[RMDB]
RNA sequence: GGGAACGACUCGAGUAGAGUCGAAAAUAGGGGUAGUAAUGAAGGCAGAAGGAAACGUUUCGGGCUCGGGGUCGGGGUCACUACCAUCACCUGAAUCUGAUGAUAAGGCACUUUUAGCUGAUUUAGCAUAUAGCGUCUUGUUCGCAAGACGCUAUAUAAAAGAAACAACAACAACAAC
Reactivity to DMS in 0.01 (KOAc 150mM, MgCl2 10mM, bicine 150mM(pH8.5), 24C), signal-to-noise 2, nucleotides 027 to 126: u010a130g040g020g000g000u000a020g020u010a090a100u000g010a090a110g000g040c050a130g020a100a090g010g010a070a140a140c120g010u000u000u010c080g010g000g030c040u010c100g020g030g000g000u010c100g000g000g000g000u010c100a020c070u020a030c020c010a040u000c050a090c080c040u000g010a080a070u010c060u010g000a050u000g000a050u000a040a100g000g000c090a070c130u000u000u000u000a070g010c060u000g010a120u000u000u010a030g000c130
Reactivity to 2A3 in 0.01 (KOAc 150mM, MgCl2 10mM, bicine 150mM(pH8.5), 24C), signal-to-noise 1, nucleotides 027 to 126: u090a020g000g020g040g010u020a080g000u070a070a150u210g060a160a060g030g000c050a050g000a040a040g100g050a090a140a060c100g020u060u070u040c030g020g020g040c040u010c030g050g000g000g000u080c130g010g010g000g000u020c000a000c050u080a070c000c020a030u060c030a020c020c010u040g050a100a040u100c040u030g080a050u080g020a030u180a070a060g010g000c020a030c110u120u070u080u110a020g050c000u010g020a200u030u100u220a050g000c020

An RNA of 177 nucleotides, treated with DMS and 2A3 and read out base by base. The reactions ran in a buffer of 150 mM KOAc, 10 mM MgCl2 and 150 mM bicine (pH 8.5), at 24 C. The DMS profile rests on 1,397 reads. It was measured as part of the RMDB library OK2TRN.